RNA sequence: GGGAACGACUCGAGUAGAGUCGAAAACGACAAGGGUGUAAAGAUCGCUCUUUUACUCGGCAUGAUAACACCGUUAUCGGGUCAACAGAGUAGUUGCAAAUGACAACAAUGCUCAGGGUUAUGCUCUAAAAGUUCGUACCCUUCGGGGUACGAACAACGGUAGAUUAAACUUCGGUUUAAUCUACCGAAAAGAAACAACAACAACAAC
Reactivity to 2A3 in 0.01 (KOAc 150mM, MgCl2 10mM, bicine 150mM(pH8.5), 24C), signal-to-noise 5, nucleotides 027 to 156: c050g050a020c060a040a040g020g070g020u060g060u170a110a150a040g130a130u200c040g000c030u020c000u010u070u030u050a080c030u040c030g000g000c030a020u040g010a010u060a080a010c180a110c140c140g040u040u050a030u080c000g020g000g030u020c010a030a040c030a120g020a000g040u060a020g000u000u030g030c040a090a180a280u200g020a130c010a050a010c010a040a060u070g000c010u040c090a050g020g000g000u060u040a050u160g020c010u020c010u100a070a140a020a030g000u000u010c000g000u000a000c000c000c000u000u020c150g030g000g000g000u000a000c000g000a010a000c000a000a000
Reactivity to DMS in 0.01 (KOAc 150mM, MgCl2 10mM, bicine 150mM(pH8.5), 24C), signal-to-noise 1, nucleotides 027 to 156: c030g010a070c070a070a070g020g020g010u000g020u000a070a030a090g000a150u000c090g010c050u020c030u000u000u000u000a060c020u000c030g000g000c040a210u010g000a110u000a020a050c000a200c070c100g020u010u020a030u010c020g010g030g040u000c010a080a050c070a060g000a040g070u000a030g030u020u000g000c040a090a140a110u000g020a130c050a030a030c060a040a090u000g010c050u010c030a030g000g000g030u000u000a110u000g020c020u000c030u000a050a100a160a130g000u000u000c010g020u020a000c010c010c010u000u000c280g090g020g000g010u020a000c000g010a020a020c000a010a080
Structure probing data (2A3 and DMS) for a 207-nucleotide construct. For DMS the reverse transcriptase was MarathonRT. The reactions ran in a buffer of 150 mM KOAc, 10 mM MgCl2 and 150 mM bicine (pH 8.5), at 24 C.